An RNA of 177 nucleotides, treated with DMS and 2A3 and read out base by base. Source: RMDB libraries RFM100 and RFMREP, as collected in RNAgym. For DMS the reverse transcriptase was MarathonRT.

[RMDB]
RNA sequence: GGGAACGACUCGAGUAGAGUCGAAAACGGUUGCUUACGAGUAAAUCAAAGCCUCAUUUCACACACACACGAGAAUCGAAACGAUUACUCUAGAAGGAUAGGUUUCAUCCCUUCUUCCUGUCCGUUCGCCUUAGUGGCAUUUCGAUGCCACUAAGGCAAAAGAAACAACAACAACAAC
Reactivity to DMS in 0.01 (KOAc 150mM, MgCl2 10mM, bicine 150mM(pH8.5), 24C), signal-to-noise 1, nucleotides 027 to 126: c180g020g000u000u000g020c030u010u010a100c150g000a100g030u010a040a030a070u000c030a110a110a110g000c040c030u000c050a070u000u030u000c060a050c060a020c160a000c120a080c040a070c100g000a070g030a080a000u000c030g020a100a070a060c090g000a020u010u000a050c060u000c000u000a070g010a130a020g000g000a020u020a000g000g000u000u020u000c070a060u000c010c000c000u010u000c100u000u000c010c020u010g040u010c080c010g000u000u020c020
Reactivity to 2A3 in 0.01 (KOAc 150mM, MgCl2 10mM, bicine 150mM(pH8.5), 24C), signal-to-noise 2, nucleotides 027 to 126: c020g040g050u060u100g000c030u070u070a070c150g030a030g020u130a060a080a030u030c060a040a000a090g010c000c000u020c030a080u060u100u100c030a030c000a010c020a000c000a000c020a000c080g020a000g020a020a030u030c080g050a120a100a040c040g000a050u000u080a210c010u010c040u030a000g040a030a020g020g000a030u060a060g000g000u050u090u040c090a100u080c010c000c000u020u020c000u000u010c010c020u000g010u000c010c010g070u080u140c070